RNA sequence: GGGAACGACUCGAGUAGAGUCGAAAACUCAAUGUAGGGAAUAACAUUGAAUUGAUACAAAUACCUUUUUCGGUGUAGGGAGAAACACCGAAUUGAUACAAAUACCUUUCUCAAUGUAGGGAAUAACAAAACAGGCAUCGCUUCGGCGAUGCCUGAACGACAGACCUAUGUUCGCAUAGGUCUGUCGAAAAGAAACAACAACAACAAC
Reactivity to 2A3 in 0.01 (KOAc 150mM, MgCl2 10mM, bicine 150mM(pH8.5), 24C), signal-to-noise 1, nucleotides 027 to 156: c010u030c000a000a040u000g070u040a070g000g030g130a070a100u100a220a030c030a030u000u000g050a140a070u130u170g060a110u110a300c120a090a070a040u170a090c000c060u010u130u000u020u000c020g000g000u000g020u020a010g030g050g020a130g170a030a060a000c010a000c000c000g000a000a000u020u030g000a000u000a040c010a060a070a000u070a130c040c000u080u110u010c020u010c070a000a170u110g030u070a050g000g000g050a010a130u170a060a040c100a040a080a040a000c010a000g030g000c000a000u000c000g000c000u120u000c220g070g000c000g000a000u000g030c010c000u000g000a000a000